Structure probing data (2A3 and DMS) for a 207-nucleotide construct. Conditions: 150 mM KOAc, 10 mM MgCl2 and 150 mM bicine (pH 8.5), 24 C.
RNA sequence: GGGAACGACUCGAGUAGAGUCGAAAAGGGCUUGACGCAUCGCCCGAAUAAGAUGCAUGUGCUUUUGCACUAAGAUAAAUGUCCGUAUCGUAGGGGACCUAGAACCUACUCAUUAAUGUCCGAAGAGUCUGGGACGAUCAUCAGGCGAGACUAAGAACCAGCUACUAUAUUUCGAUAUAGUAGCUGGAAAAGAAACAACAACAACAAC
Reactivity to 2A3 in 0.01 (KOAc 150mM, MgCl2 10mM, bicine 150mM(pH8.5), 24C), signal-to-noise 4, nucleotides 027 to 156: g020g010g010c020u080u090g080a040c070g000c020a000u010c010g030c020c000c000g000a010a050u140a040a000g010a010u010g010c030a040u090g010u010g000c010u070u120u160u300g010c010a010c030u030a110a030g070a110u120a130a190a020u150g020u010c030c000g030u070a110u090c060g000u020a020g000g000g000g030a030c020c060u060a050g020a040a000c010c010u010a010c010u020c030a030u020u230a150a030u160g050u010c030c020g050a080a040g020a040g070u030c040u030g010g000g030a040c030g030a070u040c010a020u010c020a020g010g030c000g020a050g010a030c060u110a130a020g020a080a060
Reactivity to DMS in 0.01 (KOAc 150mM, MgCl2 10mM, bicine 150mM(pH8.5), 24C), signal-to-noise 3, nucleotides 027 to 156: g050g000g020c080u000u020g010a100c070g020c060a050u000c050g010c020c010c020g010a120a090u000a070a040g000a080u010g010c010a140u010g030u000g000c020u000u000u010u010g030c000a040c030u010a110a090g000a110u000a070a100a100u000g000u000c020c060g030u000a080u020c080g000u000a060g010g010g000g010a170c070c060u000a120g000a090a130c020c020u010a060c030u010c060a130u010u000a080a100u010g000u000c050c050g000a120a160g010a160g010u020c030u010g020g030g000a080c010g030a110u000c040a090u010c040a050g040g020c030g020a090g020a190c070u000a050a090g020a120a300